Chemical mapping of a 177-nucleotide RNA with DMS and 2A3. 2A3 adducts were read by reverse transcription with SuperScript II with manganese. Conditions: 150 mM KOAc, 10 mM MgCl2 and 150 mM bicine (pH 8.5), 24 C. DMS adducts were read by reverse transcription with MarathonRT.

RNA sequence: GGGAACGACUCGAGUAGAGUCGAAAACGGCGGUGCGCGGAUGGACAGGUCGAGACGUCGCGAGCCCUUCUGGUGGGGGUCUGCAUGGGAGAAUCUCGGUGCCACAUAGCUGGGAGGUCCGAUACGGCGAUAAAAAUUCUUUCGAGAAUUUUUAUCGAAAAGAAACAACAACAACAAC
Reactivity to DMS in 0.01 (KOAc 150mM, MgCl2 10mM, bicine 150mM(pH8.5), 24C), signal-to-noise 5, nucleotides 027 to 126: c070g000g000c060g010g010u010g010c070g020c050g000g010a080u020g010g010a090c090a060g000g010u020c050g000a090g010a080c050g010u000c040g020c050g020a100g000c050c000c020u020u010c050u010g000g000u010g010g010g000g010g000u010c040u010g020c040a100u010g000g000g000a110g000a110a100u020c030u000c030g010g000u010g000c040c050a070c110a090u020a110g000c050u000g000g000g000a070g000g000u000c010c020g000a100u020a070c100g000g000
Reactivity to 2A3 in 0.01 (KOAc 150mM, MgCl2 10mM, bicine 150mM(pH8.5), 24C), signal-to-noise 8, nucleotides 027 to 126: c030g040g000c010g020g030u070g020c060g000c010g050g020a060u060g020g030a020c040a050g050g040u040c020g010a020g000a060c030g030u070c030g020c020g030a040g000c010c000c000u080u070c060u100g060g020u090g020g020g010g000g020u020c020u060g020c030a070u080g040g040g000a080g030a080a080u030c010u000c030g030g020u040g040c020c000a040c020a070u150a030g010c030u030g000g030g020a040g000g030u000c020c000g010a020u050a120c080g020g000